[RMDB]
RNA sequence: GGGAACGACUCGAGUAGAGUCGAAAAGAUAUGGACCCACGCUUUUGACGCUCAGCGUUUCGGAAACGAAACGGAGCGAUAAGCGUGGUCCUAAGUCAAAAGGCCUAUAAGUUCGCUUAUAGGCCAACUAAGAACGAGAGUUCGCUCUCGUUCUUAGAAAAGAAACAACAACAACAAC
Reactivity to 2A3 in 0.01 (KOAc 150mM, MgCl2 10mM, bicine 150mM(pH8.5), 24C), signal-to-noise 6, nucleotides 027 to 126: g010a000u030a020u090g020g000a020c070c100c020a010c020g020c010u200u190u150u300g290a190c110g000c000u010c030a240g200c070g000u000u010u000c010g000g020a050a040a040c000g010a000a000a000c000g010g000a010g000c030g140a140u080a070a000g010c000g000u000g000g000u010c000c000u000a030a020g000u000c010a030a020a100a160g000g010c000c000u000a000u000a000a010g050u040u230c300g060c200u010u010a000u000a000g000g010c000c000a000a000
Reactivity to DMS in 0.01 (KOAc 150mM, MgCl2 10mM, bicine 150mM(pH8.5), 24C), signal-to-noise 4, nucleotides 027 to 126: g020a030u000a270u010g000g000a020c100c050c050a010c000g000c000u000u000u000u000g010a190c100g010c000u000c000a130g010c020g010u000u000u000c000g010g000a060a050a120c000g010a010a000a000c000g010g000a010g020c000g000a060u000a010a010g000c000g010u000g000g000u000c000c000u000a030a100g000u000c030a080a080a120a120g010g010c000c000u000a000u000a000a010g010u000u010c190g020c000u000u000a000u000a010g010g010c000c000a000a010